[RMDB]
RNA sequence: GGGAACGACUCGAGUAGAGUCGAAAACGCGGGUUUUGUCGUCGCGACCGACGGCGGCGCGGUGCGCGCACGCCGCGUGGUGUUCGCGGGCGGCGGCUAUGCGCGCGGCGUGUAUCCGCGCAUCGAAUGACGAAAAUAAUUUCGAUUAUUUUCGUCAAAAAGAAACAACAACAACAAC
Reactivity to DMS in 0.01 (KOAc 150mM, MgCl2 10mM, bicine 150mM(pH8.5), 24C), signal-to-noise 8, nucleotides 027 to 126: c070g020c070g010g010g010u000u000u000u000g020u000c010g010u000c010g020c100g010a190c110c040g000a060c030g020g000c010g010g010c030g010c020g010g010u000g000c020g020c020g000c020a030c040g010c000c000g000c010g020u000g010g020u000g000u000u000c070g010c050g010g010g010c130g010g010c020g020g010c070u010a050u000g010c020g010c010g010c010g010g000c010g020u000g000u010a070u010c170c080g010c010g010c020a020u000c020g000a120a140
Reactivity to 2A3 in 0.01 (KOAc 150mM, MgCl2 10mM, bicine 150mM(pH8.5), 24C), signal-to-noise 4, nucleotides 027 to 126: c070g040c060g020g120g000u050u130u200u260g030u050c010g000u020c000g010c060g100a100c030c070g080a070c000g030g020c010g010g010c030g000c010g030g050u010g000c030g000c000g020c000a010c010g000c000c010g000c000g020u010g030g060u100g040u110u130c040g000c040g020g110g070c060g110g010c010g000g000c050u060a070u190g090c020g000c020g010c000g010g000c000g000u010g010u020a080u030c050c020g000c000g000c010a010u040c000g020a080a080
The record gives the reactivity of an RNA of 177 nucleotides to DMS and 2A3. It was measured as part of the RMDB library OK2TRN. For 2A3 the reverse transcriptase was SuperScript II with manganese. For DMS, 31,566 sequencing reads were counted. The reactions ran in a buffer of 150 mM KOAc, 10 mM MgCl2 and 150 mM bicine (pH 8.5), at 24 C.